[RMDB]
RNA sequence: GGGAACGACUCGAGUAGAGUCGAAAAGUUACGCAAAAAGCGUAAUGUUGACCCUUUGUCCAAUUUUGAACAUAAGGUUAUUACAGAGUGCGUUACCAUAGUUUUAGGUGACGCAAUUCAAGUAGCCCACUGCAUUACAGUUCGCUGUAAUGCAGUGAAAAGAAACAACAACAACAAC
Reactivity to 2A3 in 0.01 (KOAc 150mM, MgCl2 10mM, bicine 150mM(pH8.5), 24C), signal-to-noise 2, nucleotides 027 to 126: g010u000u000a000c000g000c020a020a040a060a220a110g000c000g020u000a010a000u050g010u010u170g000a070c020c000c000u020u080u050g080u050c040c030a080a090u050u140u100u300g050a050a010c030a040u080a120a030g000g020u020u040a030u010u060a070c070a050g010a000g020u000g000c000g000u010u000a000c000c010a080u110a120g270u110u090u100u130a020g000g000u000g000a000c000g000c010a000a000u000u010c010a020a030g000u010a010g020c000c020
Reactivity to DMS in 0.01 (KOAc 150mM, MgCl2 10mM, bicine 150mM(pH8.5), 24C), signal-to-noise 3, nucleotides 027 to 126: g010u000u000a000c000g020c000a090a080a090a160a140g000c010g020u000a000a000u000g020u000u010g010a130c030c000c020u020u000u000g000u000c000c000a020a220u000u000u000u000g000a020a010c030a030u010a020a070g000g000u000u000a100u010u000a090c180a140g010a010g010u000g010c000g000u000u000a010c000c000a080u000a100g000u000u000u010u000a080g030g000u000g000a000c010g000c000a010a000u000u000c010a080a110g020u000a030g010c010c000